[RMDB]
RNA sequence: GGGAACGACUCGAGUAGAGUCGAAAAGUCGCCAAGAGCCGGGGGCUGGCGCGGCUCAUCGCCGACACGGGCGCCGCCGCCUCGCCGACGAGCAACGGCGAGUACCAGUUCAAGCGGCCCGUGGGCGGCCAUAUGGACGGUUCGCCGUCCAUAUGGCAAAAGAAACAACAACAACAAC
Reactivity to 2A3 in 0.01 (KOAc 150mM, MgCl2 10mM, bicine 150mM(pH8.5), 24C), signal-to-noise 2, nucleotides 027 to 126: g010u020c030g010c070c020a060a080g060a010g010c010c010g040g000g000g030g010c050u050g010g000c110g010c010g050g010c010u020c040a070u080c040g040c030c000g070a080c010a000c050g010g010g000c050g060c060c030g030c000c000g020c020c000u000c000g000c010c010g030a110c060g090a050g060c070a050a040c010g000g000c010g000a000g000u010a100c020c030a040g010u050u140c110a120a020g050c020g050g030c020c010c000g010u030g040g010g010c010g010
Reactivity to DMS in 0.01 (KOAc 150mM, MgCl2 10mM, bicine 150mM(pH8.5), 24C), signal-to-noise 5, nucleotides 027 to 126: g010u000c060g010c010c020a230a120g000a060g010c020c020g010g000g010g010g010c030u000g010g010c060g020c010g010g000c000u000c030a130u010c070g020c020c000g000a170c040a020c040g000g000g000c030g010c230c070g000c010c030g010c240c010u000c000g020c010c010g000a080c100g000a120g010c190a130a140c010g000g000c000g000a020g000u000a080c100c040a060g000u000u010c090a120a140g010c010g010g000c000c000c000g010u000g000g000g000c010g010